[RMDB]
RNA sequence: GGGAACGACUCGAGUAGAGUCGAAAAUGUUCGUCCAAAAAGGACAAAGCGGGCCUCCGCAGAGGAUUUAUAUAGGACAUGCAAACAGUCAGGGACAUGUCCACCUGAUGUGGUGCGAAAGAUAGAACUGAGAAGACAUAUUCGUAUGUCUUCUCAGAAAAGAAACAACAACAACAAC
Reactivity to 2A3 in 0.01 (KOAc 150mM, MgCl2 10mM, bicine 150mM(pH8.5), 24C), signal-to-noise 4, nucleotides 027 to 126: u140g020u050u090c030g010u010c010c000a080a180a100a020a120g020g000a010c000a010a090a000g010c010g030g040g000c010c030u060c020c020g010c010a020g020a020g040g020a010u080u300u060a150u130a020u120a110g000g020a010c020a010u020g030c040a050a180a110c030a090g220u220c070a060g050g010g070a070c010a030u020g000u000c010c010a010c020c000u100g050a150u040g060u020g020g000u020g020c030g070a110a050a010g080a030u170a080g090a120a030
Reactivity to DMS in 0.01 (KOAc 150mM, MgCl2 10mM, bicine 150mM(pH8.5), 24C), signal-to-noise 6, nucleotides 027 to 126: u000g010u000u000c190g010u010c010c010a040a100a090a130a120g000g010a070c000a030a160a160g000c030g010g010g040c120c240u000c030c060g020c050a060g000a300g000g010a090u000u000u020a060u000a120u010a150g000g000a020c020a020u010g000c060a070a090a080c060a080g000u000c090a070g010g000g020a120c080a050u000g020u000c010c040a070c010c010u000g010a050u000g010u000g000g010u000g000c030g010a070a060a060g000a120u000a070g010a090a160